[RMDB]
RNA sequence: GGGAACGACUCGAGUAGAGUCGAAAAUCCUAAGUCCGAUCGCAGAUAUGGACCGUAGUUACCCAGAGUUUAUCGGAAACGAUAAACGACGAAGGGUAGGUUCGAAGGUCCAUGUAGAUCGGAUAUGGAAAAACGAUUGGUCUUCGGACCAAUCGAAGUCAUUACUAGGGUUCGCCCUAGUAAUGACAAAAGAAACAACAACAACAAC
Reactivity to 2A3 in 0.01 (KOAc 150mM, MgCl2 10mM, bicine 150mM(pH8.5), 24C), signal-to-noise 5, nucleotides 027 to 156: u030c000c000u020a100a010g020u000c000c000g010a000u010c010g020c270a030g050a200u120a040u120g000g000a010c000c000g060u080a040g060u050u010a000c000c010c000a010g010a010g020u020u000u010a020u000c000g010g030a090a010a020c010g010a010u000a000a010a020c020g060a090c030g030a040a070g000g000g000u010a010g010g140u140u100c050g080a180a010g000g000u000c000c000a000u000g000u020a010g000a000u000c000g010g000a000u000a010u020g020g030a040a040a000a020a040c000g020a000u040u000g010g000u000c020u040u070c280g100g000a000c010c010a000a000u000c000g000a010a010
Reactivity to DMS in 0.01 (KOAc 150mM, MgCl2 10mM, bicine 150mM(pH8.5), 24C), signal-to-noise 3, nucleotides 027 to 156: u000c000c000u000a080a240g020u020c000c000g010a030u000c020g000c110a150g020a110u000a040u010g010g010a020c000c000g000u010a170g020u000u000a020c000c010c000a100g010a300g000u000u010u010a000u040c010g030g000a190a130a300c000g000a020u000a010a020a020c020g000a160c150g030a100a110g020g000g050u000a000g030g020u010u000c070g020a130a220g010g010u000c000c000a060u000g020u000a140g020a020u000c000g010g010a000u000a030u000g000g010a050a080a000a100a190c000g010a010u000u010g000g010u000c010u010u000c300g070g000a010c010c010a000a010u000c000g000a020a090

Structure probing data (2A3 and DMS) for a 207-nucleotide construct. For DMS, 5,080 sequencing reads were counted. The RNA was probed in 150 mM KOAc, 10 mM MgCl2 and 150 mM bicine (pH 8.5) at 24 C. Values cover nucleotides 27 to 156. For 2A3 the reverse transcriptase was SuperScript II with manganese. Source: RMDB library RNAMAK, as collected in RNAgym.